Chemical mapping of a 177-nucleotide RNA with 2A3 and DMS.
RNA sequence: GGGAACGACUCGAGUAGAGUCGAAAACACAGAAGACGCUUUUUGCCCAAUAGCUACAUAAACACAUAUUACAUUUUGACCUUGUUGAUUGAGAAUCGUAUCUGUGGCUACUGCUGUUUUACCGGUCAGUAUUUAAUGGAUUCGUCCAUUAAAUACUAAAAGAAACAACAACAACAAC
Reactivity to 2A3 in 0.01 (KOAc 150mM, MgCl2 10mM, bicine 150mM(pH8.5), 24C), signal-to-noise 9, nucleotides 027 to 126: c060a000c020a020g120a120a020g080a060c040g020c020u060u090u050u160u250g050c010c010c000a030a070u050a030g020c030u060a020c030a090u200a060a190a010c070a020c040a070u110a090u160u190a090c070a140u110u090u070u200g090a080c020c030u050u060g040u040u060g120a240u040u090g030a060g070a120a070u080c050g010u060a030u040c040u040g030u030g040g000c000u030a040c010u040g070c020u010g070u050u030u040u080a040c020c010g020g040u090c040
Reactivity to DMS in 0.01 (KOAc 150mM, MgCl2 10mM, bicine 150mM(pH8.5), 24C), signal-to-noise 8, nucleotides 027 to 126: c070a070c090a040g010a090a080g010a090c100g010c010u000u000u010u010u010g010c030c020c020a070a090u010a040g010c030u010a050c090a050u020a040a070a070c090a080c090a070u010a060u010u020a060c080a080u000u010u010u020g000a080c050c040u000u010g010u000u000g000a090u010u010g010a070g000a040a060u010c080g020u010a030u010c040u000g000u000g010g010c010u000a060c050u010g000c050u000g010u010u000u000u010a120c050c040g000g010u030c130
Annotation:
It was measured as part of the RMDB library OK1LIB. DMS adducts were read by reverse transcription with MarathonRT. Conditions: 150 mM KOAc, 10 mM MgCl2 and 150 mM bicine (pH 8.5), 24 C.